[RMDB]
RNA sequence: GGGAACGACUCGAGUAGAGUCGAAAAGAGCAGACUCAUAUAAAAUGUUGAAAUGAAGUAAUGCCUGUUCAUGCCUUACUAUAUAUGUCAGCAUUCCACUGAUAUCACUGGGUGCCACACACAUGCAAGAGAGACCAUAGUUCGCUAUGGUCUCUCUAAAAGAAACAACAACAACAAC
Reactivity to 2A3 in 0.01 (KOAc 150mM, MgCl2 10mM, bicine 150mM(pH8.5), 24C), signal-to-noise 1, nucleotides 027 to 126: g070a010g000c030a010g010a060c000u000c080a000u110a010u040a120a160a020a090u120g060u070u120g080a090a150a090u040g020a040a000g030u020a030a060u090g050c000c010u080g080u110u090c050a110u100g000c010c000u120u060a070c040u010a020u050a080u010a010u240g080u100c010a000g000c000a020u150u000c020c000a110c000u030g010a140u070a040u110c010a020c110u010g000g110g000u080g020c040c000a070c000a000c010a010c010a050u120g060c040a090
Reactivity to DMS in 0.01 (KOAc 150mM, MgCl2 10mM, bicine 150mM(pH8.5), 24C), signal-to-noise 2, nucleotides 027 to 126: g020a020g010c030a060g010a060c070u010c080a090u000a120u020a110a100a130a080u020g000u000u000g010a090a070a050u010g000a100a060g010u020a050a060u020g000c020c040u000g020u010u020c150a120u020g010c000c070u000u000a030c080u000a090u000a110u000a070u010g000u000c040a040g010c030a080u000u000c080c040a060c120u000g010a070u010a050u000c180a050c060u010g020g000g030u000g000c020c060a040c060a060c120a040c110a060u010g000c110a090